[RMDB]
RNA sequence: GGGAACGACUCGAGUAGAGUCGAAAAUUUCAGGUUUACGUGUCUGGCGUACUAAUCCUGGUUCGGUUUUUGACUAUGAUCCAGCAGAAGACAACAUCCAGUCCCGAAGCUUACACAUGAUUAAUGGUGUGUUAGCUGAAAAAGGCUUACAACAUAAACUAUAUGACUAGUUCGCUAGUCAUAUAGUAAAAGAAACAACAACAACAAC
Reactivity to DMS in 0.01 (KOAc 150mM, MgCl2 10mM, bicine 150mM(pH8.5), 24C), signal-to-noise 5, nucleotides 027 to 156: u000u010u010c060a070g020g040u010u000u000a030c070g040u000g010u000c070u000g020g010c050g030u000a070c140u010a060a080u000c020c030u000g010g010u000u010c110g010g010u000u000u010u010u000g020a070c030u000a080u010g010a090u000c020c020a070g040c060a120g010a110a070g000a100c030a060a060c040a300u000c040c040a070g000u000c010c010c010g010a140a040g000c000u000u010a040c010a020c010a020u000g010a230u000u000a100a170u000g050g040u000g000u000g010u000u000a020g030c010u000g000a050a050a060a080a060g020g000c030u000u000a070c080a060a090c070a100u010a060a090
Reactivity to 2A3 in 0.01 (KOAc 150mM, MgCl2 10mM, bicine 150mM(pH8.5), 24C), signal-to-noise 9, nucleotides 027 to 156: u080u080u080c030a020g040g020u040u050u050a040c020g010u040g090u070c060u080g070g000c020g020u020a060c050u090a040a080u070c010c020u010g020g030u030u060c050g020g050u030u030u010u060u190g070a040c020u030a050u240g020a040u050c020c020a010g010c030a010g050a110a010g050a050c030a080a020c020a120u030c030c020a020g050u030c010c010c000g040a040a000g000c000u010u030a000c010a000c000a010u030g030a100u180u190a190a050u140g100g010u010g000u000g000u030u040a000g000c010u010g030a060a020a010a010a000g060g020c060u110u120a050c040a130a010c020a130u200a160a110